[RMDB]
RNA sequence: GGGAACGACUCGAGUAGAGUCGAAAAGAUGGAGGGUCCGGCCUCGGACUCCUCCUAUAAGAUGUAACUAUUACGAGGCCAUUAAUGGCGUUUUCGCCUAGGUGCACGACGGCGUGCGUGGCACCGUAAGACUUAAUGAAUAACACGCCGGAUACAACAUAGUCGUAAUCUUCGGAUUACGACUAUGAAAAGAAACAACAACAACAAC
Reactivity to 2A3 in 0.01 (KOAc 150mM, MgCl2 10mM, bicine 150mM(pH8.5), 24C), signal-to-noise 2, nucleotides 027 to 156: g110a040u060g000g000a000g000g020g020u000c000c000g050g010c020c000u020c040g010g010a010c020u050c010c000u000c000c000u000a020u010a010a000g030a020u170g020u070a110a000c060u030a060u300u020a010c000g000a010g000g000c000c010a040u130u240a130a100u100g000g000c000g080u170u060u140u300c030g000c000c010u020a150g000g010u000g000c020a000c040g000a000c000g000g030c010g000u020g010c010g000u010g040g000c000a000c000c010g000u010a030a000g070a020c050u080u090a070a060u170g200a050a080u110a080a020c000a000c010g000c000c000g000g000a130u160a030c010a110a000
Reactivity to DMS in 0.01 (KOAc 150mM, MgCl2 10mM, bicine 150mM(pH8.5), 24C), signal-to-noise 1, nucleotides 027 to 156: g000a120u000g010g010a010g010g000g000u000c000c000g040g010c010c090u000c010g000g020a030c000u000c000c000u000c000c000u020a050u000a100a130g000a130u010g010u000a050a180c130u000a140u000u010a140c020g010a030g000g030c010c010a240u000u010a080a050u020g050g040c020g010u000u000u000u000c010g080c000c010u000a150g020g120u000g000c000a090c020g030a030c010g040g000c000g070u000g000c010g030u030g020g010c030a050c050c050g000u010a030a100g020a130c050u000u000a070a120u010g000a100a120u020a070a080c060a040c020g030c000c000g010g000a160u010a040c050a060a170
This 207-nucleotide RNA was probed chemically with 2A3 and DMS. For DMS, 2,455 sequencing reads were counted. 2A3 adducts were read by reverse transcription with SuperScript II with manganese. Reactivities are rounded to 0.1 and cut off at 0 and 3.